[RMDB]
RNA sequence: GGGAACGACUCGAGUAGAGUCGAAAAGUGGCUGAUGUAGCUUAUAAUUCACAGUACUAGCAAUGACAGGGGAAAAUUUCACUAGUCAGGGGUAACAGUUAUAGGGUCACUGUGCUCAGCCCAUAGAUACAUGCUUCCUCUUCGGAGGAAGCAUGUAAAAAGAAACAACAACAACAAC
Reactivity to DMS in 0.01 (KOAc 150mM, MgCl2 10mM, bicine 150mM(pH8.5), 24C), signal-to-noise 1, nucleotides 027 to 126: g000u030g000g030c010u030g010a170u000g040u000a070g000c050u000u000a160u020a160a050u000u010c110a110c080a140g000u000a050c030u000a070g000c170a080a070u000g000a180c110a150g010g000g010g030a000a040a100a080u010u000u010c160a050c010u000a030g030u000c070a130g040g010g020g010u000a020a050c300a010g000u000u000a030u000a070g050g000g010u000c030a060c010u040g010u010g000c100u000c050a080g000c030c030c010a090u010a140g000a180
Source: RMDB library OK2TRN, as collected in RNAgym. This 177-nucleotide RNA was probed chemically with DMS. For DMS the reverse transcriptase was MarathonRT. The RNA was probed in 150 mM KOAc, 10 mM MgCl2 and 150 mM bicine (pH 8.5) at 24 C.